An RNA of 177 nucleotides, treated with 2A3 and DMS and read out base by base.
[RMDB]
RNA sequence: GGGAACGACUCGAGUAGAGUCGAAAAGUUUAUCGUACCUGAUGAUGUAGGUGGAAGAUAUUCUGUUUUAACAGCAGUAGGAUUAUUACCAAUUGCAACAGCUGGAAUUAACAUCGAAGCUAUGAUGAACCAACAUGUCGUUCGCGACAUGUUGGUUAAAAGAAACAACAACAACAAC
Reactivity to 2A3 in 0.01 (KOAc 150mM, MgCl2 10mM, bicine 150mM(pH8.5), 24C), signal-to-noise 1, nucleotides 027 to 126: g010u060u000u000a070u080c010g000u000a010c110c000u040g000a080u040g000a000u050g000u120a000g100g120u000g130g000a130a000g060a040u010a110u100u020c020u000g120u000u110u000u230a220a200c160a080g000c000a000g000u120a050g040g190a000u100u100a070u070u000a300c000c000a050a050u040u060g000c120a230a060c000a030g000c040u060g020g000a110a150u180u030a070a070c030a000u000c000g000a030a000g000c070u050a050u030g000a000u050g150
Reactivity to DMS in 0.01 (KOAc 150mM, MgCl2 10mM, bicine 150mM(pH8.5), 24C), signal-to-noise 1, nucleotides 027 to 126: g010u000u000u000a020u000c010g000u000a000c020c020u000g000a090u040g040a100u000g000u000a040g070g020u000g030g000a140a080g020a070u040a040u020u040c020u030g000u000u000u020u000a110a050c090a030g000c020a060g030u000a050g000g020a050u030u030a020u010u070a070c090c030a020a110u060u000g010c140a020a010c090a060g000c090u000g000g000a160a030u030u030a050a060c050a000u000c030g000a130a080g000c230u000a010u000g000a050u010g000
The reactions ran in a buffer of 150 mM KOAc, 10 mM MgCl2 and 150 mM bicine (pH 8.5), at 24 C. The 2A3 profile rests on 662 reads. It was measured as part of the RMDB library OK1LIB.